[RMDB]
RNA sequence: GGGAACGACUCGAGUAGAGUCGAAAAAAAUCACCUCGGUAUGAUUAGGGUGAGACCUAGGAACCGUAGGGGUAUUCUCAAAGGAAGCUUUUGCAGUGACGACCAUGUAAGUGGGAUAUAACAACAGAUCAGUUUCGCAGUUUCGACUGCGAAACAAGAUGGAGGAAAACUUCGGUUUUCCUCCAUCAAAAGAAACAACAACAACAAC
Reactivity to 2A3 in 0.01 (KOAc 150mM, MgCl2 10mM, bicine 150mM(pH8.5), 24C), signal-to-noise 3, nucleotides 027 to 156: a000a000a020u060c050a040c000c000u010c000g040g000u230a120u250g050a120u080u060a010g010g020g010u050g040a080g040a050c000c000u020a010g020g070a040a030c020c030g020u160a050g000g010g010g020u010a040u050u010c060u000c000a080a040a000g080g010a030a040g000c030u050u080u200u170g010c130a040g020u020g080a020c030g030a020c040c000a010u060g010u180a160a050g010u040g020g010g070a020u050a010u040a160a070c110a030a010c020a020g060a130u130c040a060g000u000u020u000c000g000c000a000g000u040u030u120c140g080a020c000u000g000c000g000a000a000a000c010a000a000
Reactivity to DMS in 0.01 (KOAc 150mM, MgCl2 10mM, bicine 150mM(pH8.5), 24C), signal-to-noise 1, nucleotides 027 to 156: a050a080a100u010c070a070c010c020u010c020g070g030u020a130u000g010a270u010u010a020g020g000g010u000g050a170g010a110c020c020u000a020g010g000a130a070c020c020g000u020a070g010g020g030g000u000a040u000u030c000u000c040a110a110a090g020g000a120a130g000c010u000u000u010u010g050c070a050g000u020g020a080c040g000a060c000c010a020u000g020u000a060a150g050u000g000g030g020a090u000a060u000a110a050c100a070a060c060a060g020a170u010c030a060g000u000u000u000c000g030c010a000g000u000u000u010c300g010a100c000u000g030c000g000a010a010a000c000a020a050